[RMDB]
RNA sequence: GGGAACGACUCGAGUAGAGUCGAAAAGAUUGCGUGUUCGCACGCAAUCAAAAAGCGUACUACCUGGCUACCUAGCCGAUAAGUCCCAAAUAGGACUUUUGACGGCUAUGUAGAACUACCAGGUAUCGCAAAAAAGCUGGAGGUUCGCCUCCAGCAAUACUCCACUUGAAUUCGUUCAAGUGGAGUAAAAAGAAACAACAACAACAAC
Reactivity to DMS in 0.01 (KOAc 150mM, MgCl2 10mM, bicine 150mM(pH8.5), 24C), signal-to-noise 2, nucleotides 027 to 156: g010a020u010u000g010c000g060u000g010u000u020c300g070c030a050c000g020c010a010a010u010c010a040a060a100a080a170g010c000g010u020a150c090u000a020c020c000u030g000g030c010u010a050c020c080u010a000g060c000c010g020a170u000a060a020g000u000c020c010c010a060a200a220u030a040g010g010a020c000u000u000u000u000g020a260c080g000g000c000u000a030u000g010u000a050g000a080a150c030u010a250c000c020a030g010g030u000a000u000c020g010c000a000a040a150a050a050a150g020c010u010g000g010a030g000g030u000u010c270g000c060c000u000c000c000a000g130c000a020a040
Reactivity to 2A3 in 0.01 (KOAc 150mM, MgCl2 10mM, bicine 150mM(pH8.5), 24C), signal-to-noise 1, nucleotides 027 to 156: g000a000u000u010g000c000g000u000g070u070u160c280g040c110a000c000g010c000a000a000u000c000a030a030a000a010a030g010c010g030u070a080c020u000a010c020c020u000g010g000c000u010a000c000c000u000a010g000c000c000g040a060u010a030a000g000u000c000c000c010a140a230a080u300a090g000g000a000c010u030u040u030u190g230a090c010g000g010c000u000a020u010g000u000a010g010a030a020c100u090a050c090c000a010g000g000u010a010u040c000g000c000a000a120a120a000a000a000g000c010u010g000g000a000g000g040u080u070c200g070c050c000u000c000c000a000g000c000a010a000
Notes
Chemical mapping of a 207-nucleotide RNA with DMS and 2A3. The reactions ran in a buffer of 150 mM KOAc, 10 mM MgCl2 and 150 mM bicine (pH 8.5), at 24 C. It was measured as part of the RMDB library RNAMAK.